Description
Structure probing data (DMS) for a 177-nucleotide construct. DMS adducts were read by reverse transcription with MarathonRT.
[RMDB]
RNA sequence: GGGAACGACUCGAGUAGAGUCGAAAAAGACACUCAAAGAAGUUGGUGAGGGAGAUUUGUCAUUUUGCUGAGCUUACAGAAGAUUUAAGCUUGGUAGAAGUUAGGUUCUAUUUUCUGUAAAAAUCAAAUACCCUGAGUAUUUCGAUACUCAGGGUAUAAAAGAAACAACAACAACAAC
Reactivity to DMS in 0.01 (KOAc 150mM, MgCl2 10mM, bicine 150mM(pH8.5), 24C), signal-to-noise 2, nucleotides 027 to 126: a080g020a100c090a090c060u000c060a120a070a150g000a090a090g010u000u000g020g010u000g000a060g010g000g020a070g010a110u010u000u000g010u020c030a130u000u000u010u000g010c050u000g010a010g010c010u000u000a010c210a080g010a100a070g010a150u000u000u000a030a030g010c000u000u010g010g010u000a020g000a010a040g010u000u000a030g030g000u000u000c040u000a050u000u010u000u000c030u000g000u030a030a050a090a090a090u000c080a050a090
The DMS profile rests on 1,708 reads. Reactivities are given for positions 27 through 126.